[RMDB]
RNA sequence: GGGAACGACUCGAGUAGAGUCGAAAAAAUUUUUUCGGUCUCGUCAGACAAAUCAGUGACAUGAUGGUCAUAGCGAAAGCACACGCUCGAAAUGUCACUGAUGAAAAAGUGCGUGUGACCAAUUUAAUCUAAUGAAAGCAUUCGUGCUUUCAUUAGAAAAAGAAACAACAACAACAAC
Reactivity to DMS in 0.01 (KOAc 150mM, MgCl2 10mM, bicine 150mM(pH8.5), 24C), signal-to-noise 4, nucleotides 027 to 126: a050a040u000u000u000u000u010u000c030g030g010u000c020u000c240g010u010c140a080g000a050c070a080a150a010u000c000a010g000u000g000a020c010a010u000g010a190u010g010g020u010c070a100u020a080g020c000g000a090a060a120g030c040a070c100a060c140g010c020u000c060g000a060a090a010u000g000u000c000a000c000u000g010a010u000g000a040a020a020a050a040g020u000g010c060g030u000g010u010g000a070c040c010a100a100u010u010u010a070a110
Reactivity to 2A3 in 0.01 (KOAc 150mM, MgCl2 10mM, bicine 150mM(pH8.5), 24C), signal-to-noise 3, nucleotides 027 to 126: a000a010u130u080u010u010u040u070c030g010g010u000c000u010c030g100u090c090a040g020a160c020a030a160a010u000c000a000g010u000g000a000c000a000u070g050a070u110g050g040u100c040a060u200a050g000c000g080a170a030a030g070c030a050c000a000c080g010c000u050c020g080a160a060a020u000g000u010c000a000c000u010g000a000u000g000a010a020a000a020a020g080u060g010c040g020u090g050u050g020a020c010c000a000a010u040u090u100a060a060

Notes
Source: RMDB library M2PK90, as collected in RNAgym. Chemical mapping of a 177-nucleotide RNA with DMS and 2A3. For DMS, 4,308 sequencing reads were counted.